[RMDB]
RNA sequence: GGGAACGACUCGAGUAGAGUCGAAAACUUGCGUUCGCGCAAGGCAAACGGGGUCUUCGAUAAGCCUGAUCAGAGCAUCGAUCCUGAAGCCUCCACGGGGGAGCUCUGAGGCUUUUGACGAAGACGGAGGCACCCAACAGGGACAGUUCGCUGUCAAAUUGGUAGCUGUUUUCGAACAGCUACCAAUAAAAGAAACAACAACAACAAC
Reactivity to 2A3 in 0.01 (KOAc 150mM, MgCl2 10mM, bicine 150mM(pH8.5), 24C), signal-to-noise 1, nucleotides 027 to 156: c000u000u000g020c000g020u020u040c280g000c000g030c170a000a000g040g000c120a200a110a130c100g030g000g000g000u000c010u020u010c000g050a050u000a070a020g020c020c020u030g140a060u250c000a020g000a020g000c040a230u050c000g300a300u260c000c000u030g040a030a030g000c000c000u020c000c000a020c020g000g030g000g000g030a040g000c000u000c000u010g100a070g000g030c000u090u010u030u080g110a060c020g000a000a010g000a000c000g000g000a000g000g020c010a050c010c000c000a070a040c070a060g300g060g000a000c020a000g040u070u230c170g010c150u010g060u000c000a050a110